The data come from the RNA Mapping Database (RMDB), library 15KLIB. This 170-nucleotide RNA was probed chemically with 2A3 and DMS. The RNA was probed in 150 mM KOAc, 10 mM MgCl2 and 150 mM bicine (pH 8.5) at 24 C. Values cover nucleotides 27 to 129.

[RMDB]
RNA sequence: GGGAACGACUCGAGUAGAGUCGAAAAUAUCCAGUAACAUGGUUGAAACUGUUGUGGGUCAACUUGAGCAAACUAAUAUGCAUAGUCCUGAUGUUAUAGUAGGUGACUAUGUCAUUAUUAGUGAAAAUAAGCCAAAAGUUCGCUUUUGGCAAAAGAAACAACAACAACAAC
Reactivity to 2A3 in 0.01 (KOAc 150mM, MgCl2 10mM, bicine 150mM(pH8.5), 24C), signal-to-noise 3, nucleotides 027 to 129: u150a030u060c000c000a010g160u090a000a230c130a200u300g080g000u050u030g010a110a070a110c030u030g120u140u040g000u030g060g000g000u000c030a000a000c000u020u080g120a000g000c050a070a020a020c000u040a000a000u000a000u010g000c000a000u000a000g000u010c010c010u010g090a140u110g160u300u060a300u030a110g110u040a060g040g040u140g040a010c020u000a000u020g010u030c050a000u060u030a000u000u000a000g000u000g000a000a000a030a010u010a000a000
Reactivity to DMS in 0.01 (KOAc 150mM, MgCl2 10mM, bicine 150mM(pH8.5), 24C), signal-to-noise 5, nucleotides 027 to 129: u050a060u020c020c010a110g010u050a040a030c220a120u010g050g010u020u060g010a040a020a050c000u050g040u010u120g030u000g040g000g040u000c000a040a030c020u010u050g030a190g000c170a140a120a030c000u010a000a000u020a000u010g040c030a030u000a000g010u000c000c040u020g040a000u060g000u040u090a130u060a230g050u030a150g010g050u050g000a020c020u040a020u010g010u060c020a010u040u010a020u000u030a020g010u020g030a020a020a060a060u050a040a120